Structure probing data (DMS and 2A3) for a 207-nucleotide construct. The RNA was probed in 150 mM KOAc, 10 mM MgCl2 and 150 mM bicine (pH 8.5) at 24 C.
RNA sequence: GGGAACGACUCGAGUAGAGUCGAAAAUCGGACGGCGGCCAUGAGUCGCAACGCAAAGCCGCGGCAAGAGGAGUUAGCGAGAAGAGACUAGGCUUUGGUUUCUUCAAGUGAAGCGGUCACCAAUCAGAAUAGCUUGCGCAGUUCGCUGCGCAAGCAAGUUUGGAUUAUACUUCGGUAUAAUCCAAACAAAAGAAACAACAACAACAAC
Reactivity to DMS in 0.01 (KOAc 150mM, MgCl2 10mM, bicine 150mM(pH8.5), 24C), signal-to-noise 1, nucleotides 027 to 156: u000c040g000g000a210c070g000g010c000g030g070c070c000a140u000g030a100g050u000c050g030c020a030a070c020g060c010a100a060a140g010c030c030g060c040g000g000c030a080a130g040a110g000g000a210g020u000u010a210g000c050g030a300g000a030a030g000a080g000a050c010u020a080g010g020c200u000u000u000g000g010u000u000u000c030u000u000c000a050a300g000u000g000a050a200g020c000g000g000u000c030a080c030c060a070a120u000c050a130g010a070a220u010a070g010c030u000u010g020c000g050c000a060g020u010u010c210g020c000u000g000c000g020c000a000a140g010c000a000a030
Reactivity to 2A3 in 0.01 (KOAc 150mM, MgCl2 10mM, bicine 150mM(pH8.5), 24C), signal-to-noise 3, nucleotides 027 to 156: u100c020g020g050a010c040g060g000c000g010g040c000c030a200u230g030a060g050u000c000g000c010a050a020c030g000c050a060a040a040g010c020c010g000c020g070g000c080a070a030g020a050g130g010a060g060u100u120a020g040c010g010a040g010a070a010g000a000g010a000c010u060a030g100g090c000u130u160u140g030g000u010u010u000c000u000u000c020a030a010g000u030g020a030a010g010c000g000g020u030c020a040c060c030a040a080u180c030a030g100a190a110u140a070g000c000u000u010g000c000g000c000a010g000u060u120c130g000c140u000g000c000g010c000a000a000g010c000a010a000